[RMDB]
RNA sequence: GGGAACGACUCGAGUAGAGUCGAAAAGGCAGCGCCGCAGCCAGCGUCGCCGGAUCCACCCCCGCCAGACCAGCCGGCAGACCAGCGGCCGCCAGCAUCGGCAGACCACCUGCCACCAGCGCCGUCAACCGUAUCAUUUAUUCGUAAAUGAUACGGUAAAAGAAACAACAACAACAAC
Reactivity to DMS in 0.01 (KOAc 150mM, MgCl2 10mM, bicine 150mM(pH8.5), 24C), signal-to-noise 7, nucleotides 027 to 126: g010g010c000a050g030c080g020c020c040g020c040a080g020c080c080a120g020c070g010u000c040g010c020c010g000g010a110u010c060c060a240c040c020c020c030c040g030c080c060a080g010a090c080c070a110g010c020c020g000g020c030a080g020a040c050c050a120g020c040g010g010c020c040g000c020c030a080g010c090a060u010c110g010g000c020a040g010a130c110c110a090c150c010u000g000c010c000a100c060c040a040g000c030g000c010c020g020u000c090a120
Reactivity to 2A3 in 0.01 (KOAc 150mM, MgCl2 10mM, bicine 150mM(pH8.5), 24C), signal-to-noise 2, nucleotides 027 to 126: g040g010c040a020g020c050g020c070c030g010c040a040g090c100c060a020g000c050g050u020c030g000c010c000g020g020a050u080c080c030a100c070c000c000c010c020g040c040c020a030g040a060c030c020a010g040c010c000g020g010c050a040g020a030c000c030a000g020c000g010g000c010c010g000c000c010a030g010c000a080u090c030g020g000c010a000g010a040c020c020a040c000c020u010g030c000c010a010c010c000a000g040c010g000c010c020g070u050c020a010

This 177-nucleotide RNA was probed chemically with DMS and 2A3. The data come from the RNA Mapping Database (RMDB), library OK2TRN. For 2A3, 6,870 sequencing reads were counted. The reactions ran in a buffer of 150 mM KOAc, 10 mM MgCl2 and 150 mM bicine (pH 8.5), at 24 C.